This 177-nucleotide RNA was probed chemically with 2A3 and DMS. For DMS the reverse transcriptase was MarathonRT. The RNA was probed in 150 mM KOAc, 10 mM MgCl2 and 150 mM bicine (pH 8.5) at 24 C.
RNA sequence: GGGAACGACUCGAGUAGAGUCGAAAAGAUGUCAAACGUCAGCAAGAGUUGAUCAAGUGGGUGUCUGACUCCAUGAACAAACACCCCAUGGGACAGAUCUACCGUGUCGUGAGGGAGGCUCUGGAUGAGUGUAAAGAGUCUUCGGACUCUUUACACUAAAAGAAACAACAACAACAAC
Reactivity to 2A3 in 0.01 (KOAc 150mM, MgCl2 10mM, bicine 150mM(pH8.5), 24C), signal-to-noise 2, nucleotides 027 to 126: g030a040u080g020u070c030a060a030a080c050g010u000c010a000g040c020a080a160g080a070g100u020u130g040a060u110c040a070a080g060u150g070g020g000u000g020u020c030u020g030a070c010u080c080c020a090u130g120a070a040c070a090a090a010c000a060c000c020c000c030a050u070g040g000g020a010c030a030g040a040u000c010u030a010c020c040g050u040g020u080c020g020u030g060a100g000g010g000a010g010g000c010u020c020u050g060g040a040u140g060
Reactivity to DMS in 0.01 (KOAc 150mM, MgCl2 10mM, bicine 150mM(pH8.5), 24C), signal-to-noise 4, nucleotides 027 to 126: g010a120u000g020u010c040a060a120a140c120g010u000c030a050g010c050a090a130g000a110g010u000u000g010a060u000c070a070a140g030u010g010g000g010u000g010u000c030u010g000a110c090u010c080c080a060u000g010a080a130c070a030a040a030c040a050c020c020c010c040a080u000g010g000g010a050c100a060g000a100u000c040u000a060c030c050g020u000g000u000c020g010u010g000a080g000g000g000a080g030g000c040u010c020u010g010g000a160u010g010